An RNA of 177 nucleotides, treated with DMS and 2A3 and read out base by base.
RNA sequence: GGGAACGACUCGAGUAGAGUCGAAAAGCGCGUGAACCGAUCUGGUAGUAGCCAAGCGAUGGGGUGACGCAGGAAGGUAGCUGAGCCAGUCAGUGGUAAUACUGGUGUAAGCGUGUAGGGCGUGACCUCAAGGUAGUUAUUUCGAUAACUACCUUGAAAAAGAAACAACAACAACAAC
Reactivity to DMS in 0.01 (KOAc 150mM, MgCl2 10mM, bicine 150mM(pH8.5), 24C), signal-to-noise 9, nucleotides 027 to 126: g010c050g020c030g010u000g010a110a100c050c020g000a090u020c050u010g010g010u010a090g020u020a140g010c030c030a070a110g010c100g010a090u020g000g000g010g010u010g000a060c060g000c020a060g010g010a090a210g010g020u010a140g010c000u000g000a300g000c000c000a020g000u010c210a140g010u010g020g010u020a100a100u020a040c000u000g000g010u000g000u030a170a050g000c010g000u010g010u020a130g000g000g000c010g010u000g000a050c030c020
Reactivity to 2A3 in 0.01 (KOAc 150mM, MgCl2 10mM, bicine 150mM(pH8.5), 24C), signal-to-noise 9, nucleotides 027 to 126: g030c030g010c060g100u060g040a040a030c010c010g020a080u060c030u050g040g010u030a060g020u040a020g040c020c010a060a020g070c040g120a100u130g020g000g000g050u040g010a020c020g000c030a010g050g030a060a020g050g020u070a020g000c000u020g010a010g030c010c000a000g010u060c010a030g080u080g180g020u170a120a060u070a160c010u010g020g000u020g030u120a020a010g010c040g050u160g030u110a030g010g040g000c010g010u020g040a050c000c010
It was measured as part of the RMDB libraries RFM100 and RFMREP.
Values are in units of 0.01, from 0 to 300, in steps of 10.